RNA sequence: GGGAACGACUCGAGUAGAGUCGAAAAGCAACAUAGAUCGUUCUAUUAACGAACACGCGCGGAUCGUCGGUGGUCGGCGAGCCCACGGACGUUCUUGAUCGCGCGAACGAGUAAAAAUCGCCGGCAAGUUAAGCUUUACGUUCGCGUAAAGCUUAACAAAAGAAACAACAACAACAAC
Reactivity to DMS in 0.01 (KOAc 150mM, MgCl2 10mM, bicine 150mM(pH8.5), 24C), signal-to-noise 3, nucleotides 027 to 126: g020c050a040a070c080a120u000a090g010a080u000c030g000u000u000c010u000a240u000u010a060a120c180g010a050a120c120a180c070g030c000g000c030g020g020a020u000c020g010u010c000g010g030u000g010g020u000c020g020g000c030g000a020g000c210c000c010a010c020g000g010a010c030g000u000u000c010u000u000g040a070u000c030g010c020g010c020g000a000a010c040g010a140g000u020a000a030a030a030a030u000c010g000c030c000g010g000c200a050a080
Reactivity to 2A3 in 0.01 (KOAc 150mM, MgCl2 10mM, bicine 150mM(pH8.5), 24C), signal-to-noise 3, nucleotides 027 to 126: g010c030a020a080c000a070u120a090g080a090u050c030g020u010u000c050u070a230u240u220a120a080c090g030a030a000c040a030c090g000c000g000c000g020g000a000u030c000g010u000c040g180g010u000g010g020u030c010g000g000c010g020a040g090c050c010c000a010c000g070g000a000c010g020u020u030c000u030u190g120a150u300c020g000c010g040c010g000a020a010c020g020a020g100u150a010a040a060a020a030u020c010g000c000c030g000g070c070a080a040

This 177-nucleotide RNA was probed chemically with DMS and 2A3. The data come from the RNA Mapping Database (RMDB), library M2PK90. The reactions ran in a buffer of 150 mM KOAc, 10 mM MgCl2 and 150 mM bicine (pH 8.5), at 24 C.